[RMDB]
RNA sequence: GGGAACGACUCGAGUAGAGUCGAAAAGAGAUAAAGGGCAAGUGCACAGGUACGGGCUCACGAGAGCCAAAAGCCAGUUAUCUUCCCAGCUCACUGCUUAGUGACAUCAUGUUAGUAGCUUGAAACAGGCCAUGACGGAAGUAUUUACACCACAAAACAGUAUAGCGCAUUUCGAUGCGCUAUACUGAAAAGAAACAACAACAACAAC
Reactivity to 2A3 in 0.01 (KOAc 150mM, MgCl2 10mM, bicine 150mM(pH8.5), 24C), signal-to-noise 3, nucleotides 027 to 156: g060a000g010a020u030a010a010a010g040g010g000c030a070a070g030u070g040c090a110c070a190g150g040u100a050c090g040g000g010c010u020c000a050c180g300a280g000a030g070c010c010a030a090a010a000g010c000c000a020g040u020u010a020u000c000u010u030c000c000c000a020g020c020u040c040a020c030u050g030c050u210u160a020g020u030g040a030c010a050u120c010a030u030g050u060u030a080g020u070a000g060c010u050u060g040a110a050a050c090a050g010g000c010c030a040u060g010a010c030g020g020a040a010g000u010a010u010u140u020a040c040a010c020c090a090c070a160a170a140a010
Reactivity to DMS in 0.01 (KOAc 150mM, MgCl2 10mM, bicine 150mM(pH8.5), 24C), signal-to-noise 1, nucleotides 027 to 156: g000a030g020a080u000a040a060a030g030g010g070c000a070a110g030u000g040c030a080c300a080g070g060u020a010c070g020g000g010c020u010c020a070c300g020a300g000a050g030c010c000a030a040a110a200g000c040c020a080g000u000u020a040u000c000u010u000c000c000c050a210g000c060u000c070a080c070u010g000c020u020u000a060g020u000g000a100c080a100u000c080a040u020g010u000u000a130g020u000a060g020c050u000u000g020a140a090a070c020a110g020g000c060c070a070u000g000a120c030g000g020a060a040g020u000a100u010u020u030a100c060a050c010c040a070c060a050a100a050a090
An RNA of 207 nucleotides, treated with 2A3 and DMS and read out base by base. For DMS, 1,364 sequencing reads were counted. High DMS reactivity at an A or C suggests that its Watson-Crick edge is free. It was measured as part of the RMDB library OK3TST.